[RMDB]
RNA sequence: GGGAACGACUCGAGUAGAGUCGAAAAUCUUCUGAUCCAAUUUCGUAGCAAAAGAACCAUAUAAGGCAUUUGAAAGUAAUUUACUGAUGCUUCUUUUUGUUUUGUUUUUUUCCUUAUCUGCUUGCUCUUUAGCUGUAAUGUUAACUUUAACGUAUUCCCUCCCCAUUAAGUUCGCUUAAUGGGGAGGAAAAGAAACAACAACAACAAC
Reactivity to 2A3 in 0.01 (KOAc 150mM, MgCl2 10mM, bicine 150mM(pH8.5), 24C), signal-to-noise 2, nucleotides 027 to 156: u000c000u020u000c020u000g030a030u000c010c060a030a050u000u020u040c060g170u260a050g020c080a010a070a100a060g000a010a030c010c030a020u000a000u030a080a010g010g030c000a020u010u010u100g110a120a050a010g050u140a120a180u120u200u160a060c020u050g030a070u060g040c000u020u080c020u120u080u010u040u060g000u020u040u030u060g000u020u000u030u000u010u010u040c020c040u120u040a120u090c030u030g050c000u020u100g030c010u020c000u060u050u090a030g000c010u000g090u110a000a120u130g010u080u050a050a120c030u060u070u230a040a030c070g020u080a090u150u220c130
The record gives the reactivity of an RNA of 207 nucleotides to 2A3. The RNA was probed in 150 mM KOAc, 10 mM MgCl2 and 150 mM bicine (pH 8.5) at 24 C. Source: RMDB library OK3TST, as collected in RNAgym.